[RMDB]
RNA sequence: GGGAACGACUCGAGUAGAGUCGAAAAUAUUGGGCACAUUGAUCGAUGGCAGUGCCUUUUCAACCGUGGUGGCGAAGUUUUCCAGCACGACGAGCGCCUUUGCGCCGGCAUCGUUCAACUGGUGUUAGAUAGGUGCAUUAUUCGUAAUGCACCUAUCAAAAGAAACAACAACAACAAC
Reactivity to DMS in 0.01 (KOAc 150mM, MgCl2 10mM, bicine 150mM(pH8.5), 24C), signal-to-noise 8, nucleotides 027 to 126: u010a100u010u010g010g000g020c010a020c010a180u010u000g010a040u000c050g010a060u000g010g010c090a070g010u000g010c020c030u000u000u010u010c110a080a120c130c020g030u010g000g010u000g010g010c160g010a100a130g010u000u000u010u000c000c010a050g010c020a030c050g000a060c050g010a150g010c070g030c020c280u010u000u010g010c040g020c020c040g000g020c010a040u000c020g010u010u010c060a060a090c280u000g000g010u000g010u010u000a090
Reactivity to 2A3 in 0.01 (KOAc 150mM, MgCl2 10mM, bicine 150mM(pH8.5), 24C), signal-to-noise 3, nucleotides 027 to 126: u180a020u040u060g010g010g000c000a000c000a030u030u110g030a010u080c040g000a010u030g090g080c040a020g010u020g000c000c000u040u000u030u020c020a040a040c040c010g010u030g010g120u060g000g030c080g110a210a070g080u100u110u140u070c000c010a030g050c010a010c010g060a010c040g020a060g040c030g030c010c000u120u170u180g000c010g020c010c000g000g000c010a010u030c010g030u000u030c010a030a030c090u150g080g020u040g090u090u000a010

Source: RMDB library OK2TST, as collected in RNAgym. This 177-nucleotide RNA was probed chemically with DMS and 2A3. The 2A3 profile rests on 3,568 reads. Conditions: 150 mM KOAc, 10 mM MgCl2 and 150 mM bicine (pH 8.5), 24 C.